[RMDB]
RNA sequence: GGGAACGACUCGAGUAGAGUCGAAAAUCGACACAUGGAAGAUUGAUUUUAGGUAAGAUGUAUCUCCAGCUAUUGAACGCGGGAAAGCCUUUCUCUUUCCUGCCCCAAAAACUGAUAUAGUUGGUCAGGAGGACUAUUCUUUCGAGAAUAGUCCUCCAAAAGAAACAACAACAACAAC
Reactivity to DMS in 0.01 (KOAc 150mM, MgCl2 10mM, bicine 150mM(pH8.5), 24C), signal-to-noise 2, nucleotides 027 to 126: u000c030g000a040c120a060c040a120u030g010g010a140a050g040a130u000u000g000a050u000u020u050u010a070g000g010u040a030a150g000a090u070g000u050a110u000c030u040c000c000a000g030c010u030a020u000u000g000a030a010c290g010c050g030g000g010a050a040a000g000c260c050u030u010u030c120u000c000u010u000u000c000c030u000g000c000c080c030c110a100a030a040a100a100c170u020g000a150u010a080u000a040g000u000u000g000g000u030c140a210
Reactivity to 2A3 in 0.01 (KOAc 150mM, MgCl2 10mM, bicine 150mM(pH8.5), 24C), signal-to-noise 3, nucleotides 027 to 126: u020c000g020a000c000a000c010a170u180g060g020a050a020g030a190u000u070g020a010u000u020u040u100a110g000g030u020a060a090g020a220u130g030u180a070u090c090u020c020c000a000g010c000u000a020u050u120g140a120a050c130g000c010g000g000g000a000a040a000g000c010c020u040u160u100c100u010c000u010u000u000c010c000u000g010c000c000c030c000a100a240a070a090a090c060u080g040a050u020a000u020a110g000u000u000g050g010u040c100a040